[RMDB]
RNA sequence: GGGAACGACUCGAGUAGAGUCGAAAACGCAUUUGUAAUAUGUCCUGCAGUGCUGUGAUGUGACAAUAUCAUUGUUACAAAGCAGUCGGUAUUGUAUGCAUUCCAUAUCAUUAUCAGAAUAUUAGGCACCACCUAUGCAUUUCGAUGCAUAGGUGGUAAAAGAAACAACAACAACAAC
Reactivity to 2A3 in 0.01 (KOAc 150mM, MgCl2 10mM, bicine 150mM(pH8.5), 24C), signal-to-noise 6, nucleotides 027 to 126: c030g000c020a060u050u140u140g110u080a080a100u050a110u170g130u070c030c040u060g040c040a030g020u040g140c010u020g000u020g030a060u010g020u000g000a000c010a020a020u060a120u190c180a090u030u040g000u030u040a030c030a010a030a010g010c000a000g000u010c030g010g000u050a050u030u120g020u040a080u040g010c040a050u130u000c000c010a040u020a040u120c080a090u130u190a060u130c060a060g090a170a060u230a130u220u090a020g070g030c050
Reactivity to DMS in 0.01 (KOAc 150mM, MgCl2 10mM, bicine 150mM(pH8.5), 24C), signal-to-noise 2, nucleotides 027 to 126: c150g050c040a070u030u020u040g020u010a030a080u000a030u040g000u040c010c000u010g010c240a090g030u060g000c030u000g000u010g000a300u000g000u000g030a020c000a020a030u000a140u040c200a130u010u010g000u000u000a000c030a010a070a240g000c000a010g030u000c070g010g030u010a010u010u010g000u000a010u030g020c040a060u020u000c100c020a070u010a040u050c030a030u010u030a030u020c020a060g010a090a020u040a080u010u000a030g010g000c110
Description
Structure probing data (2A3 and DMS) for a 177-nucleotide construct. It was measured as part of the RMDB library OK1LIB. In probing experiments dimethyl sulfate is read out at A N1 and C N3, which are open when not base-paired. The 2A3 profile rests on 4,312 reads.